Overview
This 177-nucleotide RNA was probed chemically with DMS. Reactivities are given for positions 27 through 126.
RNA sequence: GGGAACGACUCGAGUAGAGUCGAAAAGCUCAGUGUGUGUCGCCCCGUCGUCUAGUGCUGGUUCUACGGCUGGGGCGUCAGCAUCCAGGUCUGACGGGACGGGCAGUAUCUCGCCAUCAACGAUAAAUUACGAUCUCGAUUUCGAUCGAGAUCGUAAAAAAGAAACAACAACAACAAC
Reactivity to DMS in 0.01 (KOAc 150mM, MgCl2 10mM, bicine 150mM(pH8.5), 24C), signal-to-noise 1, nucleotides 027 to 126: g000c000u010c050a150g000u030g010u010g000u000g060u000c000g010c000c000c000c000g000u000c010g020u040c160u010a010g020u000g020c080u020g010g000u000u020c010u010a060c010g000g000c000u010g030g010g000g010c030g010u000c030a060g010c020a040u020c050c080a090g000g000u000c140u000g010a030c130g030g000g000a060c020g020g030g010c080a060g000u030a040u000c060u000c060g030c040c030a120u010c120a080a020c080g010a090u030a060a110a060